[RMDB]
RNA sequence: GGGAACGACUCGAGUAGAGUCGAAAAGAUAUGGACUCUGGGAGCUCAGUAUCGGAAACGAUAUGGGAGCGAAGAACAGACAUGUCCUAAGUCAAAAGUGCUUCACUACUUCGGUAGUGAAGCACAACGUAGGAUGACUGUUCGCAGUCAUCCUACGAAAAGAAACAACAACAACAAC
Reactivity to 2A3 in 0.01 (KOAc 150mM, MgCl2 10mM, bicine 150mM(pH8.5), 24C), signal-to-noise 1, nucleotides 027 to 126: g020a000u000a000u020g000g000a000c000u000c010u060g000g000g030a040g000c010u060c000a030g040u010a010u010c000g010g010a020a030a020c030g010a020u020a030u140g300g170g040a010g000c010g080a120a010g000a000a000c000a010g130a020c120a240u300g020u040c000c010u020a020a000g030u030c000a000a010a030a200g020u010g000c010u000u000c000a000c000u050a010c000u050u110c240g020g010u000a010g010u000g020a000a000g030c000a000c000a000a000
Reactivity to DMS in 0.01 (KOAc 150mM, MgCl2 10mM, bicine 150mM(pH8.5), 24C), signal-to-noise 2, nucleotides 027 to 126: g000a030u000a090u010g000g000a020c030u000c010u000g010g000g020a090g000c000u020c000a300g000u020a010u010c010g020g000a030a010a080c000g020a010u000a000u040g010g000g000a010g020c030g020a130a090g000a120a200c090a030g010a110c300a090u000g000u000c000c000u000a020a080g000u000c030a070a070a110a040g010u000g000c000u000u000c000a020c000u000a010c000u010u010c230g040g000u000a000g000u020g000a000a010g000c000a000c000a000a010
The record gives the reactivity of an RNA of 177 nucleotides to 2A3 and DMS. The RNA was probed in 150 mM KOAc, 10 mM MgCl2 and 150 mM bicine (pH 8.5) at 24 C. Source: RMDB library TTRDEL, as collected in RNAgym. For 2A3 the reverse transcriptase was SuperScript II with manganese.